[RMDB]
RNA sequence: GGGAACGACUCGAGUAGAGUCGAAAAGAUAUGGAUGUACCGAAACGUGAACUACUGUCGGGAGUUCUUUCGGAAACGAAAGAACUUCUCUAGCGUGCAGCACGAGAUAGCUGUACAUCCUAAGUCACAGUCUUAAUAGCUUCGGCUAUUAAGACUGAAAAGAAACAACAACAACAAC
Reactivity to DMS in 0.01 (KOAc 150mM, MgCl2 10mM, bicine 150mM(pH8.5), 24C), signal-to-noise 3, nucleotides 027 to 126: g010a030u000a230u020g010g000a040u010g020u000a010c000c050g010a090a230a140c040g000u010g000a070a110c030u010a300c020u000g040u000c090g000g010g000a020g010u000u000c000u000u000u000c000g010g010a040a030a120c000g020a000a010a000g000a020a000c000u000u000c000u000c040u000a130g020c230g010u000g030c050a030g010c000a000c010g000a100g000a170u010a170g010c120u000g020u000a020c000a000u000c000c000u000a020a080g010u000c020a260
Reactivity to 2A3 in 0.01 (KOAc 150mM, MgCl2 10mM, bicine 150mM(pH8.5), 24C), signal-to-noise 2, nucleotides 027 to 126: g010a010u040a030u090g010g000a020u010g000u020a020c000c040g000a110a060a020c010g000u010g020a080a070c040u210a040c020u300g050u130c070g010g000g000a000g010u000u000c000u000u040u000c010g010g030a000a030a020c010g010a000a000a000g000a000a010c000u070u000c020u000c000u050a120g150c130g300u300g050c100a000g030c000a000c030g090a130g060a220u180a040g060c130u080g000u000a000c000a000u040c010c000u000a160a020g010u010c020a010